Conditions: 150 mM KOAc, 10 mM MgCl2 and 150 mM bicine (pH 8.5), 24 C. Chemical mapping of a 207-nucleotide RNA with 2A3.
[RMDB]
RNA sequence: GGGAACGACUCGAGUAGAGUCGAAAAGGUGGUUUCGACCACCACACGCGUACUACGCUGCUAGCUUGAAGUACUACCCACCCUGGAUCCCAAAUAGGAUCCAGGAGGUAUGGAAGAGCUUGGACCAGCGUAUCGCCAUUCUCUGUUUCGACAGAGAGCCGUCUCUAUGAUUCGUCAUAGAGACGGCAAAAGAAACAACAACAACAAC
Reactivity to 2A3 in 0.01 (KOAc 150mM, MgCl2 10mM, bicine 150mM(pH8.5), 24C), signal-to-noise 2, nucleotides 027 to 156: g000g000u030g000g010u070u130u240c250g180a070c010c000a000c010c020a040c020a030c050g000c000g000u060a130c040u000a000c030g000c000u000g000c010u020a000g010c020u000u130g090a140a010g030u110a020c000u050a060c010c020c000a050c020c000c000u000g020g000a010u030c030c030c040a200a300a080u300a210g020g010a000u040c000c000a000g010g000a010g000g010u010a010u150g020g060a130a070g030a010g000c000u060u160g110g020a130c110c010a030g010c000g000u010a050u250c000g040c060c020a100u110u060c000u000c000u000g010u010u210u050c130g060a010c000a060g030a000g000a020